[RMDB]
RNA sequence: GGGAACGACUCGAGUAGAGUCGAAAAAGAACGAUAAAUACUUACAUUCAGAAACAGAAAAGUGCCUGUAACGUUGUGCUGGCUUGUAAGAACAGAGAAUAGAGUUCAUGUAAAAUGAGAGACACACACAAAUACUUCUCUAGGCAUCUGUGCAUAAUAUUAGUCCGUAGUUCGCUACGGACUAAUAAAAAGAAACAACAACAACAAC
Reactivity to 2A3 in 0.01 (KOAc 150mM, MgCl2 10mM, bicine 150mM(pH8.5), 24C), signal-to-noise 2, nucleotides 027 to 156: a000g060a040a000c070g030a060u070a140a170a030u140a120c010u060u010a000c000a080u040u050c020a020g120a100a220a040c030a020g090a090a090a070a070g090u080g000c010c010u070g020u030a120a070c070g000u000u050g010u070g010c030u000g000g020c000u000u040g020u040a030a030g030a060a010c020a010g030a000g020a020a020u030a040g060a010g030u070u120c070a040u100g010u130a010a060a130a220u110g020a090g000a010g060a040c040a000c010a000c000a000c000a080a130a150u140a080c020u020u020c000u000c000u020a020g000g000c020a020u050c020u010g000u070g010c040a050u050a160a100
Reactivity to DMS in 0.01 (KOAc 150mM, MgCl2 10mM, bicine 150mM(pH8.5), 24C), signal-to-noise 1, nucleotides 027 to 156: a080g020a170a040c060g010a230u000a090a040a120u000a080c030u010u000a070c060a140u010u000c080a140g010a190a080a160c040a130g010a040a080a070a100g040u000g030c020c040u000g040u000a090a130c040g000u000u010g020u000g000c000u010g010g000c060u000u000g010u010a060a070g000a050a120c070a060g010a000g040a140a090u000a060g020a150g010u010u000c020a040u000g000u000a040a030a080a090u010g010a090g020a120g030a000c000a080c060a070c040a040c030a000a010a110u000a050c040u000u000c110u000c110u000a040g030g020c010a070u000c040u000g020u000g010c040a090u010a060a140